[RMDB]
RNA sequence: GGGAACGACUCGAGUAGAGUCGAAAACAACAUAACUAUGUAUCAAAUGUUCAAGCACAAACGCAAUCACCGACAACUUAUACAGUAGUUGCUGGCGAUUCAUUAUAUAAGAUUGCUUUAGAGCAUCGCAGGAUAGAUAGUUCGCUAUCUAUCCUGCAAAAGAAACAACAACAACAAC
Reactivity to DMS in 0.01 (KOAc 150mM, MgCl2 10mM, bicine 150mM(pH8.5), 24C), signal-to-noise 2, nucleotides 027 to 126: c080a040a050c220a060u030a090a100c150u010a120u020g000u020a030u030c070a000a170a030u000g030u030u000c020a030a080g000c000a020c090a040a080a110c160g000c150a000a000u000c000a070c000c010g000a040c000a000a000c010u000u000a110u020a130c270a190g010u070a020g030u020u030g010c000u000g000g000c110g020a000u000u010c040a030u060u060a090u050a250u070a110a080g010a080u020u000g030c000u000u070u020a050g090a030g000c020a000u000c100
Reactivity to 2A3 in 0.01 (KOAc 150mM, MgCl2 10mM, bicine 150mM(pH8.5), 24C), signal-to-noise 8, nucleotides 027 to 126: c030a000a010c040a070u220a100a070c080u230a150u300g100u080a140u210c100a100a160a020u050g010u020u010c000a010a000g000c010a050c020a100a090a020c170g070c130a020a010u000c000a010c030c010g100a060c010a000a010c020u050u070a050u140a280c120a110g160u160a010g000u030u000g000c020u020g020g000c000g010a000u000u000c010a020u090u180a120u040a030u040a170a080g090a210u070u100g000c000u030u040u110a040g000a000g010c000a000u070c070
Chemical mapping of a 177-nucleotide RNA with DMS and 2A3. The data come from the RNA Mapping Database (RMDB), library OK1LIB. The RNA was probed in 150 mM KOAc, 10 mM MgCl2 and 150 mM bicine (pH 8.5) at 24 C. DMS (dimethyl sulfate) methylates the pairing face of unpaired adenines and cytosines.